[RMDB]
RNA sequence: GGGAACGACUCGAGUAGAGUCGAAAAUGUUCAAUGAAGCCUGUGACCGCAGUUAGCGCAGCAGAACCGAUAUUUACAGCCUUGAGGCCUCGUGCCUUUUUGAAUUUCAGUGUAUAGGCUGAGUCAGCAUCAUCAAAGUUACGGGUGCUCAUAUAAGACAGUCUAUCUUAUUCGUAAGAUAGACUGUAAAAGAAACAACAACAACAAC
Reactivity to 2A3 in 0.01 (KOAc 150mM, MgCl2 10mM, bicine 150mM(pH8.5), 24C), signal-to-noise 5, nucleotides 027 to 156: u100g010u030u030c040a030a020u050g040a040a020g030c000c000u000g050u060g020a050c020c030g000c020a030g040u100u180a070g040c050g010c080a040g000c010a010g060a070a030c020c050g020a030u020a070u150u130u070a100c030a000g040c010c010u030u050g020a010g010g030c000c050u130c130g040u090g020c020c000u030u050u000u050u060g110a110a090u060u120u110c060a030g010u010g020u140a070u110a100g040g010c010u000g000a010g040u050c020a010g020c010a020u040c000a010u050c040a160a030a060g030u050u030a020c020g020g000g020u010g040c020u000c050a060u110a010u020a160a030g100
Reactivity to DMS in 0.01 (KOAc 150mM, MgCl2 10mM, bicine 150mM(pH8.5), 24C), signal-to-noise 4, nucleotides 027 to 156: u010g020u000u000c050a130a080u000g010a070a300g000c020c020u000g010u000g010a050c040c020g030c050a140g010u000u000a070g010c020g000c030a110g030c020a100g020a130a070c020c030g020a100u000a070u010u000u010a130c060a090g020c070c050u000u000g010a070g010g020c010c010u010c210g030u010g030c010c000u010u010u000u000u000g010a080a090u010u000u000c040a060g000u010g030u000a110u010a060g010g020c010u010g000a080g010u000c030a060g000c040a120u000c070a130u010c070a060a120a090g000u000u000a040c070g000g020g020u000g020c090u000c040a060u000a100u000a090a180g000